[RMDB]
Conditions: 150 mM KOAc, 10 mM MgCl2 and 150 mM bicine (pH 8.5), 24 C. This 177-nucleotide RNA was probed chemically with 2A3 and DMS. It was measured as part of the RMDB library TTRDEL. For 2A3 the reverse transcriptase was SuperScript II with manganese. DMS adducts were read by reverse transcription with MarathonRT.
RNA sequence: GGGAACGACUCGAGUAGAGUCGAAAAGAUAUGGAUAUGGACAUGAUCAGCGUCGGAAACGACGCGGGAGAUCAACAGCCAUGAUCCUAAGUCAAAAUCAUAACUGGUGUUCGCACCAGUUAUGAAAGAAUCUCUUGGAGUUCGCUCCAAGAGAUUCAAAAGAAACAACAACAACAAC
Reactivity to 2A3 in 0.01 (KOAc 150mM, MgCl2 10mM, bicine 150mM(pH8.5), 24C), signal-to-noise 1, nucleotides 027 to 126: g010a060u040a050u100g000g000a000u000a020u050g020g010a050c090a190u100g010a020u010c020a020g000c000g000u020c010g000g030a080a080a070c000g010a000c020g030c010g010g060g000a270g040a000u030c040a040a080c060a030g000c030c010a030u050g150a060u000c000c000u050a140a010g070u040c040a000a010a010a300u060c010a010u010a010a000c000u000g000g020u000g030u090u110c300g000c180a000c010c010a000g000u000u000a010u000g000a000a000a000
Reactivity to DMS in 0.01 (KOAc 150mM, MgCl2 10mM, bicine 150mM(pH8.5), 24C), signal-to-noise 2, nucleotides 027 to 126: g010a020u000a300u010g000g000a010u000a020u000g000g000a050c070a160u000g000a000u000c020a090g010c000g020u000c020g000g000a120a090a150c000g010a020c000g000c000g010g020g030a090g010a000u000c000a060a110c270a170g000c000c000a000u000g010a020u010c010c000u000a030a130g000u000c040a080a100a130a130u000c000a000u000a010a000c000u000g010g020u010g030u010u020c250g020c000a000c000c000a040g000u000u000a000u000g000a020a060a100